[RMDB]
RNA sequence: GGGAACGACUCGAGUAGAGUCGAAAAGAUAUGGACCCUACGCGAGUGGACAUGAAUGACGGUCGGAAACGACCGUCCAUUCAACAGCCACUCAGGGUCCUAAGUCAAACUGCUGUUCGCAGCAGAACUGUGUUGUCAGGUUCGCCUGACAACACAGAAAAGAAACAACAACAACAAC
Reactivity to 2A3 in 0.01 (KOAc 150mM, MgCl2 10mM, bicine 150mM(pH8.5), 24C), signal-to-noise 1, nucleotides 027 to 126: g020a000u060a030u020g030g010a000c000c050c000u110a090c300g070c090g170a020g000u050g000g050a110c190a300u300g010a030a000u010g010a010c050g040g000u020c000g000g040a040a030a070c000g030a010c010c000g000u020c000c010a000u010u000c010a010a030c030a000g000c000c000a000c000u000c000a000g000g000g000u020c000c000u010a010a050g010u000c000a060a120a170c000u000g040c000u010g000u120u170c300g100c190a010g030c000a020g010a050a080
Reactivity to DMS in 0.01 (KOAc 150mM, MgCl2 10mM, bicine 150mM(pH8.5), 24C), signal-to-noise 1, nucleotides 027 to 126: g030a050u000a300u040g000g000a040c000c000c000u010a110c300g070c300g000a010g040u000g000g000a010c210a090u020g060a000a000u000g000a030c000g020g010u020c000g040g010a050a070a120c020g050a000c000c010g000u000c000c060a020u000u010c030a030a080c210a260g020c010c000a000c000u000c000a050g000g000g000u000c000c000u000a050a060g000u040c020a130a190a120c000u000g000c000u000g060u020u000c170g010c040a010g020c000a000g000a060a160

The record gives the reactivity of an RNA of 177 nucleotides to 2A3 and DMS.
The RNA was probed in 150 mM KOAc, 10 mM MgCl2 and 150 mM bicine (pH 8.5) at 24 C.
For DMS, 685 sequencing reads were counted.
2A3 adducts were read by reverse transcription with SuperScript II with manganese.
For DMS the reverse transcriptase was MarathonRT.
As a SHAPE reagent, 2A3 marks flexible, mostly unpaired nucleotides at the ribose 2'-OH.